[RMDB]
RNA sequence: GGGAACGACUCGAGUAGAGUCGAAAAACCGGCGGUAAAUCAACUCAGUUGAAAGCCGCGAGCGCUUUGGAUGCGAACUCAAAGGACAGCAGAUCCGGUGUAAUUCCGGGGCCGACGGUUAGAGUCCAAAAGAGGUUAUCGUUCGCGAUAACCUCAACAGUAACAUAGACUUCGGUCUAUGUUACUGAAAAGAAACAACAACAACAAC
Reactivity to DMS in 0.01 (KOAc 150mM, MgCl2 10mM, bicine 150mM(pH8.5), 24C), signal-to-noise 2, nucleotides 027 to 156: a050c000c030g020g010c030g030g020u000a030a180a150u000c020a010a060c020u010c100a150g020u010u020g000a040a110a300g020c000c030g010c050g000a080g040c030g000c010u000u010u000g020g020a090u000g000c190g010a140a020c020u000c020a060a110a120g020g030a080c010a150g000c050a140g020a160u010c000c010g010g010u000g000u000a160a300u000u000c000c000g000g010g010g020c000c010g000a040c020g010g000u000u000a100g000a180g000u020c020c010a000a030a110a100g000a020g030g000u000u000a010u000c010g010u000u000c300g010c010g020a010u000a010a020c000c000u030c000a000a040
Reactivity to 2A3 in 0.01 (KOAc 150mM, MgCl2 10mM, bicine 150mM(pH8.5), 24C), signal-to-noise 4, nucleotides 027 to 156: a000c010c000g010g000c020g010g030u070a130a140a180u060c010a030a040c060u090c300a160g020u030u020g040a120a040a010g030c020c010g010c030g010a040g000c050g000c010u170u110u170g060g050a030u140g060c040g050a120a080c010u010c070a040a070a050g030g030a090c030a060g050c010a040g070a180u040c010c000g010g000u020g010u040a040a060u050u050c000c020g000g000g000g020c010c010g020a020c000g000g000u010u040a080g010a010g100u010c010c010a020a060a030a070g010a000g000g000u000u000a000u000c010g010u050u040c180g030c000g130a000u000a000a000c000c000u020c000a000a000

Structure probing data (DMS and 2A3) for a 207-nucleotide construct. Reactivities are rounded to 0.1 and cut off at 0 and 3. For DMS, 3,877 sequencing reads were counted.